[RMDB]
RNA sequence: GGGAACGACUCGAGUAGAGUCGAAAAGCGUCGCUUCGGCGACGCAAGUCCGAGCGUGAGCUCGGACAGGCACUGGCUUCGGCCAGUGCCAAGACGCGUCUUCGGACGCGUCACAUCUUACUUCGGUAAGAUGAGGCUCACGUGAGUGAGCCAAGAGAGACCGGUGACGGUCUCUCAACAAGUGCUCGUGAGAGCACUUGAUUAGGUUAGCUAUUUAGCUUUACGUUCCAGGAUGCCUAGUGGCAGCCCCACAAUAUCCAGGAAGUAGGUCAGACUUCGGUCUGACCAAAAGAAACAACAACAACAAC
Reactivity to 2A3 in 0.01 (KOAc 150mM, MgCl2 10mM, bicine 150mM(pH8.5), 24C), signal-to-noise 1, nucleotides 027 to 266: g000c000g000u000c010g030c020u020u070c290g080g000c020g000a000c010g000c000a000a000g010u080c000c000g000a000g030c000g060u130g040a010g000c000u010c000g010g000a000c010a020g000g020c000a000c000u020g020g000c010u020u090c250g120g000c000c010a000g000u000g000c000c000a020a020g000a000c000g000c010g000u000c000u050u070c190g130g000a030c000g000c000g000u000c000a020c000a000u000c000u010u010a020c000u010u030c250g070g000u000a000a000g000a000u010g040a150g040g020c020u010c000a000c030g100u200g110a090g010u000g010a000g000c010c000a000a020g000a000g000a000g000a000c000c010g000g050u090g030a030c000g000g000u020c000u040c010u000c000a000a000c000a000a000g000u000g020c000u010c010g060u070g110a070g000a000g040c000a000c000u000u000g000a030u030u080a010g040g000u030u060a010g000c000u030a170u270u290u220a110g010c000u160u080u020a030c030g040u020u000c010c010a040g020g020a030u040g010c030c030u100a100g000u020g050g000c030a080g040c030c010c000c000a000c010a030a050u040a000u130c000c000a000g000g010a000a020g030u100a110